Chemical mapping of a 177-nucleotide RNA with 2A3 and DMS. It was measured as part of the RMDB library OK2TRN. Conditions: 150 mM KOAc, 10 mM MgCl2 and 150 mM bicine (pH 8.5), 24 C. The DMS profile rests on 12,735 reads.
RNA sequence: GGGAACGACUCGAGUAGAGUCGAAAACGAUGAGGGGAGAAGAGAAGUGGGCAGGUGGGUCGAAGACGCCCGCCCCAAGGCGCACGCCCGUCGCAUGUUUGCAUGCGGGGGUCAGACCCCCUUACCGAUCAGUAAUAGUCUUCGGACUAUUACUGAUAAAAGAAACAACAACAACAAC
Reactivity to 2A3 in 0.01 (KOAc 150mM, MgCl2 10mM, bicine 150mM(pH8.5), 24C), signal-to-noise 6, nucleotides 027 to 126: c040g050a060u120g020a050g000g010g020g010a080g020a130a020g050a020g030a230a040g040u080g020g120g000c020a020g000g020u050g010g030g020u050c040g040a090a020g130a030c050g000c010c020c000g010c000c000c000c010a050a050g130g000c110g000c040a010c030g020c000c020c010g130u070c000g000c010a010u020g070u240u250u300g120c010a000u010g000c000g000g000g000g000g000u000c010a000g010a050c000c000c000c000c000u000u020a020c020c010g020
Reactivity to DMS in 0.01 (KOAc 150mM, MgCl2 10mM, bicine 150mM(pH8.5), 24C), signal-to-noise 8, nucleotides 027 to 126: c050g010a040u000g010a050g010g000g010g020a080g000a210a150g010a100g020a070a100g020u000g010g000g030c070a100g010g020u000g010g010g010u010c050g010a100a130g010a120c250g000c010c010c010g000c020c010c120c060a090a080g010g010c020g010c050a050c110g000c080c010c010g010u000c010g020c000a010u000g000u010u010u010g010c020a000u000g000c000g010g000g000g010g000u000c070a090g000a280c110c000c000c000c000u000u000a030c030c020g000